Structure probing data (DMS and 2A3) for a 207-nucleotide construct. Source: RMDB library RNAMAK, as collected in RNAgym.
RNA sequence: GGGAACGACUCGAGUAGAGUCGAAAACGAGAGAUUCGUCUCUCGAAAAAAACCUUUGUGGCACACCAACUUUUGACGGCUUCUACCCACCCAUUGGGUGGGUUCUAGCCGAUAAGUUGGGUGCCACUCUGGUAAAAAAACUGUGUUCGCACAGUAAGAUAGUCUAAAGAUUCGUCUUUAGACUAUCAAAAGAAACAACAACAACAAC
Reactivity to DMS in 0.01 (KOAc 150mM, MgCl2 10mM, bicine 150mM(pH8.5), 24C), signal-to-noise 1, nucleotides 027 to 156: c010g020a050g030a020g000a060u000u010c280g030u000c010u000c020u010c010g010a000a000a040a060a060a050a010c010c010u010u000u010g020u000g010g000c010a010c000a150c050c000a000a010c010u000u010u010u020g010a160c120g020g010c020u000u010c000u000a010c010c040c000a000c000c000c010a300u010u010g040g060g070u010g030g000g010u000u000c000u000a040g060c000c000g040a030u000a000a040g000u000u000g000g040g040u000g000c000c010a000c000u010c010u020g000g010u010a000a000a110a060a060a030a040c000u020g000u000g040u010u010c250g000c060a030c010a050g030u020a060a110
Reactivity to 2A3 in 0.01 (KOAc 150mM, MgCl2 10mM, bicine 150mM(pH8.5), 24C), signal-to-noise 3, nucleotides 027 to 156: c000g000a010g000a000g000a010u050u050c190g130u000c020u000c000u010c010g030a110a000a000a000a000a000a010c000c010u010u000u020g020u020g000g020c010a020c060a130c020c000a040a000c000u120u070u100u250g300a160c020g010g010c000u030u020c020u040a010c010c000c000a010c010c010c130a300u200u300g010g010g010u000g010g010g000u010u010c020u010a000g000c010c000g000a000u010a010a000g000u000u000g010g010g000u000g030c000c000a000c000u000c000u000g000g000u080a080a020a010a010a100a000a000c000u000g000u000g010u030u040c040g050c120a000c000a010g040u050a010a040